This 207-nucleotide RNA was probed chemically with 2A3 and DMS. For 2A3, 6,569 sequencing reads were counted. DMS (dimethyl sulfate) methylates the pairing face of unpaired adenines and cytosines.
[RMDB]
RNA sequence: GGGAACGACUCGAGUAGAGUCGAAAAGAACACGAACACUCUCUCGAACGAACACGUGUGUGAACACUCGAUCUCUCACUCGUACUCGAACGUGAUCACGAGUGUGAUCACACUCGAGAACGUUCACGUGUGAGUGAUCGUGUGAGUACGAGUGUUCCGACUAGGACUUUUUCGAAAGUCCUAGUCGAAAAGAAACAACAACAACAAC
Reactivity to 2A3 in 0.01 (KOAc 150mM, MgCl2 10mM, bicine 150mM(pH8.5), 24C), signal-to-noise 7, nucleotides 027 to 156: g060a060a030c070a010c150g020a050a000c020a010c000u000c010u010c010u030c050g060a110a070c070g030a090a010c080a030c110g150u180g030u050g020u050g140a100a010c010a000c010u030c010g020a040u000c040u000c000u000c020a010c010u050c010g020u060a060c030u020c050g020a030a020c070g000u010g010a030u010c010a000c050g140a150g110u300g010u020g090a030u080c040a010c000a000c030u000c000g010a020g020a030a010c080g040u110u090c080a010c020g030u020g010u020g010a000g010u020g010a010u010c010g010u010g000u010g010a010g020u050a030c060g000a000g010u000g010u010u000c010
Reactivity to DMS in 0.01 (KOAc 150mM, MgCl2 10mM, bicine 150mM(pH8.5), 24C), signal-to-noise 1, nucleotides 027 to 156: g010a100a060c090a120c040g000a080a120c030a030c050u010c010u020c000u000c010g020a090a150c120g030a060a110c050a040c050g000u000g020u000g000u010g000a160a150c010a050c010u000c010g030a040u000c030u000c010u000c030a030c000u000c000g030u000a170c000u010c040g000a000a040c030g000u000g000a060u000c010a030c000g030a100g010u010g070u000g000a050u000c040a030c000a020c000u000c010g000a030g020a090a050c120g010u000u000c070a050c000g050u020g040u000g010a020g030u010g000a010u000c010g000u010g010u000g010a120g000u000a050c080g000a020g020u000g000u000u000c000